[RMDB]
RNA sequence: GGGAACGACUCGAGUAGAGUCGAAAAGCCAGAAAUGUUUUGGUAACAGAAAACAAUGUGAUGAAAAUAGCAGACUUUGGACUCGCCAGAGAUAUCAACAAUAUAGACUAUUACAAAAAGACCACCAAUGUAAGUCGAUGGCAGUAACACAGUGGGACUAUUACCCCUAGUUCGCUAGGGGUAAUAGAAAAGAAACAACAACAACAAC
Reactivity to DMS in 0.01 (KOAc 150mM, MgCl2 10mM, bicine 150mM(pH8.5), 24C), signal-to-noise 2, nucleotides 027 to 156: g020c000c010a080g000a120a140a140u010g040u000u020u010u000g020g020u010a030a280c060a250g010a090a030a070a090c040a030a090u000g020u010g000a100u000g010a060a120a090a090u000a120g000c000a070g020a090c090u010u030u000g020g000a110c040u000c090g000c080c070a090g040a050g010a200u010a100u010c060a100a080c050a010a050u010a140u010a130g010a070c040u000a000u000u020a100c040a060a030a130a080a160g000a050c020c040a060c010c000a050a120u020g010u000a060a080g010u000c050g010a090u000g010g030c020a090g000u000a060a010c060a040c040a080g050u000g010g030g000a210
Reactivity to 2A3 in 0.01 (KOAc 150mM, MgCl2 10mM, bicine 150mM(pH8.5), 24C), signal-to-noise 2, nucleotides 027 to 156: g060c000c000a010g110a000a150a040u100g020u020u050u060u040g040g030u070a150a030c040a040g110a080a090a010a010c050a030a060u130g010u050g070a060u070g100a060a030a010a080u070a040g050c020a000g010a090c000u050u000u040g060g070a030c010u000c120g010c070c020a020g010a000g010a060u040a050u140c020a000a080c020a100a060u210a010u100a110g030a020c020u030a130u190u110a070c050a020a160a000a010a000g040a030c010c060a010c000c020a080a020u010g030u060a020a070g000u000c010g040a000u010g000g010c020a040g060u080a090a050c030a010c010a080g000u060g000g020g000a000